[RMDB]
RNA sequence: GGGAACGACUCGAGUAGAGUCGAAAAUUGCUACGGUAACCUUCUGUCAGGAAUACCCGAAUCAUGAGAACUCUGUUUCGAAAGGAUUUGCGGUAGAGCACAUAGAAUGGGACCCGAAAGGUUGUGAUGCAGUUAAAUACUUCGGUAUUUAACUGCAAAAAGAAACAACAACAACAAC
Reactivity to DMS in 0.01 (KOAc 150mM, MgCl2 10mM, bicine 150mM(pH8.5), 24C), signal-to-noise 4, nucleotides 027 to 126: u010u020g010c030u010a190c110g000g000u020a030a300c000c000u000u000c000u000g040u000c110a200g010g000a080a170u000a020c000c000c020g000a010a010u000c000a030u000g000a300g000a020a010c020u040c220u010g010u030u000u020c010g000a090a050a010g020g020a010u000u000u010g000c070g020g030u000a000g020a150g000c060a130c300a030u020a000g000a000a030u040g000g010g000a210c190c010c050g020a030a070a080g010g030u000u010g000u000g000a120
Reactivity to 2A3 in 0.01 (KOAc 150mM, MgCl2 10mM, bicine 150mM(pH8.5), 24C), signal-to-noise 2, nucleotides 027 to 126: u150u170g010c010u050a050c000g000g000u020a040a090c000c010u000u000c010u000g090u060c070a050g210g000a030a030u020a010c020c000c000g000a000a000u000c000a050u090g030a000g000a040a000c020u200c230u300g100u130u010u010c030g060a080a010a060g010g010a010u000u040u000g120c140g000g010u010a030g010a010g050c070a030c000a080u120a000g030a050a040u290g000g000g010a000c010c020c040g070a110a040a020g110g000u000u000g000u000g010a060
Structure probing data (DMS and 2A3) for a 177-nucleotide construct. For DMS the reverse transcriptase was MarathonRT. For 2A3, 1,235 sequencing reads were counted.